[RMDB]
RNA sequence: GGGAACGACUCGAGUAGAGUCGAAAAAUCUUGUGCUGACCUUCUAUCUCGUCCUGUGACUUAGAAUGCCUAACUGGCUGGGAAUGAAGCCUAGGAGGUCUCAGCCUCAUUUUACCUAGCCCCUAUUCAGCAUGGAGUUACCCUGGUUCAAACUCCAGUAUUACCGCAGGUUCGCCUGCGGUAAUACAAAAGAAACAACAACAACAAC
Reactivity to 2A3 in 0.01 (KOAc 150mM, MgCl2 10mM, bicine 150mM(pH8.5), 24C), signal-to-noise 1, nucleotides 027 to 156: a000u080c070u060u200g050u130g000c010u000g010a060c020c000u000u000c010u030a040u020c010u020c040g110u070c020c020u140g040u080g220a140c030u050u010a000g080a100a090u130g040c020c000u080a180a150c080u080g000g000c010u010g000g000g050a050a040u080g060a050a000g000c040c100u050a030g030g000a010g040g080u000c010u000c030a010g000c010c000u010c000a040u000u090u170u090a040c000c040u010a080g000c000c000c000c000u020a140u070u050c080a010g030c000a010u080g030g020a040g000u030u050a100c000c030c020u080g060g030u010u080c040a060a040a040c020u020c000c000a000
This 207-nucleotide RNA was probed chemically with 2A3. For 2A3 the reverse transcriptase was SuperScript II with manganese. It was measured as part of the RMDB library OK3TST. The reactions ran in a buffer of 150 mM KOAc, 10 mM MgCl2 and 150 mM bicine (pH 8.5), at 24 C.